Description
This 170-nucleotide RNA was probed chemically with DMS and 2A3. For 2A3 the reverse transcriptase was SuperScript II with manganese. For 2A3, 2,929 sequencing reads were counted. It was measured as part of the RMDB library 15KLIB. The DMS profile rests on 7,056 reads.

RNA sequence: GGGAACGACUCGAGUAGAGUCGAAAAGAGCCCGAAGAGCGAGUGGGGGAGAACUCCCGAGAGUUGGGAGACAGAAAGAGGGCGAGUGAUCUCGGAAGGAAUCCCCCAAGCUGCCAACAGAGGAAGAUGACAGUCGACUUCGGUCGACUGAAAAGAAACAACAACAACAAC
Reactivity to DMS in 0.01 (KOAc 150mM, MgCl2 10mM, bicine 150mM(pH8.5), 24C), signal-to-noise 4, nucleotides 027 to 129: g050a170g040c040c000c020g010a080a090g000a070g050c000g050a140g030u080g020g000g010g050g000a020g020a140a250c000u010c050c000c010g040a000g020a070g050u030u040g010g010g000a150g030a160c140a060g020a080a050a120g010a060g050g000g040c110g030a110g040u040g010a120u010c000u010c020g010g020a050a030g070g000a130a240u030c060c050c010c000c020a050a010g000c060u070g000c060c080a090a100c110a060g020a060g000g010a040a020g050a040u000g010a140
Reactivity to 2A3 in 0.01 (KOAc 150mM, MgCl2 10mM, bicine 150mM(pH8.5), 24C), signal-to-noise 2, nucleotides 027 to 129: g030a020g070c000c000c020g010a050a040g040a000g010c020g000a020g150u050g000g000g000g000g000a000g000a060a000c000u000c000c010c000g010a000g000a000g080u020u110g010g000g000a040g000a000c020a030g120a000a080a000g040a060g000g000g000c010g000a010g060u100g050a060u000c000u000c000g000g020a020a000g010g030a090a060u000c000c000c010c000c000a000a000g010c030u000g000c000c010a080a000c030a110g040a000g000g000a050a020g060a020u190g070a000